Source information
Structure probing data (DMS and 2A3) for a 207-nucleotide construct. For DMS the reverse transcriptase was MarathonRT. The reactions ran in a buffer of 150 mM KOAc, 10 mM MgCl2 and 150 mM bicine (pH 8.5), at 24 C. It was measured as part of the RMDB library M2RFPK.

[RMDB]
RNA sequence: GGGAACGACUCGAGUAGAGUCGAAAAAGCAGGGCCGCGUUACGACGCGGUCCUGCAGCAAUGAGUAGAAGCGGUCAAAUUUGGUGUCGAGUUCCAACAAACCAAAUUCGGGCAUUGCUCACUGCAAAAAACUCUCUUUAGUUCGCUAAAGAGAGAACAAAGAACCUAUCUUCGGAUAGGUUCUUUGAAAAGAAACAACAACAACAAC
Reactivity to DMS in 0.01 (KOAc 150mM, MgCl2 10mM, bicine 150mM(pH8.5), 24C), signal-to-noise 2, nucleotides 027 to 156: a120g010c000a030g020g000g000c000c010g030c010g030u000u000a140c180g080a150c000g010c000g020g000u000c000c000u000g010c000a020g010c030a050a010u000g000a010g000u000a070g010a100a130g030c060g020g000u010c030a040a010a020u000u000u000g020g030u000g010u000c050g000a130g000u000u000c090c090a090a120c060a060a080a050c000c000a010a010a030u000u000c030g040g010g010c010a180u000u020g000c010u000c020a050c010u010g020c020a000a050a040a070a070a120c000u000c000u000c000u000u000u000a010g010u000u000c300g070c020u000a000a020a020g000a000g010a000g020a050a080
Reactivity to 2A3 in 0.01 (KOAc 150mM, MgCl2 10mM, bicine 150mM(pH8.5), 24C), signal-to-noise 3, nucleotides 027 to 156: a000g000c000a000g000g000g000c000c000g010c010g020u040u060a120c280g020a010c000g040c000g020g000u000c000c000u000g010c000a000g000c000a000a020u010g000a000g000u030a020g020a140a010g040c090g040g050u080c020a020a010a020u010u000u000g000g000u030g070u150c120g080a090g140u230u130c080c010a050a020c030a090a180a030c010c010a000a000a010u030u020c030g020g000g000c030a040u040u050g000c000u000c000a000c000u000g000c000a000a010a030a050a080a080c000u000c000u000c000u010u020u010a010g010u020u050c180g030c130u000a000a000a000g000a000g000a010g010a010a000